RNA sequence: GGGAACGACUCGAGUAGAGUCGAAAAAGUAGGCCAGAGAUCAGUCUGGUUAAUUUCCAAGGUGGAAUUAGGCUAGAAUGUUAUUAAGGAAAAUUUUUGAAUGACACUUAGUUGUAUCCUAGUUCAAAACUGAAACAGGUUUCGACCUGUUUCAGUUAAAAGAAACAACAACAACAAC
Reactivity to DMS in 0.01 (KOAc 150mM, MgCl2 10mM, bicine 150mM(pH8.5), 24C), signal-to-noise 2, nucleotides 027 to 126: a080g020u010a110g010g030c010c020a020g000a080g000a070u010c170a070g000u000c000u000g030g010u000u000a020a050u000u000u020c020c000a170a120g010g000u000g010g010a040a020u000u000a030g000g000c050u000a030g000a050a030u000g000u000u010a070u000u010a110a080g000g000a060a110a220a060u000u010u020u000u030g000a050a030u000g000a300c180a070c040u000u000a030g010u000u010g020u000a040u010c010c010u000a020g010u010u010c040a070a050

An RNA of 177 nucleotides, treated with DMS and read out base by base. The RNA was probed in 150 mM KOAc, 10 mM MgCl2 and 150 mM bicine (pH 8.5) at 24 C. The data come from the RNA Mapping Database (RMDB), library OK2TRN.